The record gives the reactivity of an RNA of 177 nucleotides to DMS and 2A3.
Values cover nucleotides 27 to 126.
DMS adducts were read by reverse transcription with MarathonRT.
2A3 adducts were read by reverse transcription with SuperScript II with manganese.
The RNA was probed in 150 mM KOAc, 10 mM MgCl2 and 150 mM bicine (pH 8.5) at 24 C.
RNA sequence: GGGAACGACUCGAGUAGAGUCGAAAAUAUCGACCUGAUUAGCGAACUCAUCGCUAAGCGCGUCAAGUUUGCUGAUGAGACCGGGAGGGCAUUUGUCACGUCCUGUCUCGAUGUGCUGAUAGUCACGCUGCAAUGUCCUGUUCGCAGGACAUUGCAGAAAAGAAACAACAACAACAAC
Reactivity to DMS in 0.01 (KOAc 150mM, MgCl2 10mM, bicine 150mM(pH8.5), 24C), signal-to-noise 2, nucleotides 027 to 126: u010a060u020c080g020a060c030c000u010g010a050u010u000a030g010c000g000a020a060c120u010c130a200u000c000g020c000u000a050a100g020c160g030c160g000u020c160a090a030g000u000u010u000g000c030u010g010a080u000g010a030g000a030c030c090g030g010g010a180g000g030g000c000a300u010u010u030g010u010c050a100c060g000u010c010c010u000g020u000c000u000c010g000a090u010g010u000g040c020u010g000a070u010a030g020u020c050a100c130g020
Reactivity to 2A3 in 0.01 (KOAc 150mM, MgCl2 10mM, bicine 150mM(pH8.5), 24C), signal-to-noise 2, nucleotides 027 to 126: u150a020u030c020g010a020c000c000u030g060a040u010u070a000g000c000g010a030a020c010u000c070a150u060c040g030c010u020a140a050g180c030g020c010g010u020c060a000a040g040u010u030u050g060c020u000g030a050u070g030a030g000a010c050c120g050g010g000a060g070g010g000c110a120u130u090u300g040u020c020a030c180g150u040c020c000u040g030u000c010u030c010g040a050u070g040u080g010c020u030g030a090u060a070g070u100c030a000c120g010